[RMDB]
RNA sequence: GGGAACGACUCGAGUAGAGUCGAAAAUGGUACGCUACUAACGAAUAAUAAAGUCAAAGGGCGUAGUUAUAGGGUAUGCCGGAUGAAUAAUCCAAUCUUCAUGUUGGCUUUCUAUUAGCAUUCCAACCAUGUUUAUUCGGUUCGCCGAAUAAACAUGAAAAGAAACAACAACAACAAC
Reactivity to DMS in 0.01 (KOAc 150mM, MgCl2 10mM, bicine 150mM(pH8.5), 24C), signal-to-noise 4, nucleotides 027 to 126: u010g020g030u010a010c010g010c010u000a010c030u000a070a020c010g010a080a080u010a190a170u010a120a120a110g000u000c020a010a080a020g000g000g010c000g030u000a050g020u000u000a040u010a060g020g000g020u000a020u000g010c020c010g010g000a030u000g010a040a030u010a080a100u010c100c220a060a060u000c140u000u000c050a030u000g000u000u000g010g010c040u000u010u000c020u000a070u010u000a110g020c080a110u000u000c010c010a100a160c200
Reactivity to 2A3 in 0.01 (KOAc 150mM, MgCl2 10mM, bicine 150mM(pH8.5), 24C), signal-to-noise 2, nucleotides 027 to 126: u060g070g020u010a010c000g000c000u010a020c010u000a060a000c040g030a040a030u270a150a030u110a060a070a030g010u040c000a300a210a000g010g000g010c020g000u000a010g000u030u050a030u040a060g100g000g040u100a030u100g030c000c020g000g020a020u020g010a020a050u110a050a040u050c100c000a000a040u060c050u040u030c040a020u080g090u180u010g110g000c000u010u000u050c030u040a090u110u040a040g000c030a060u080u050c000c010a010a000c020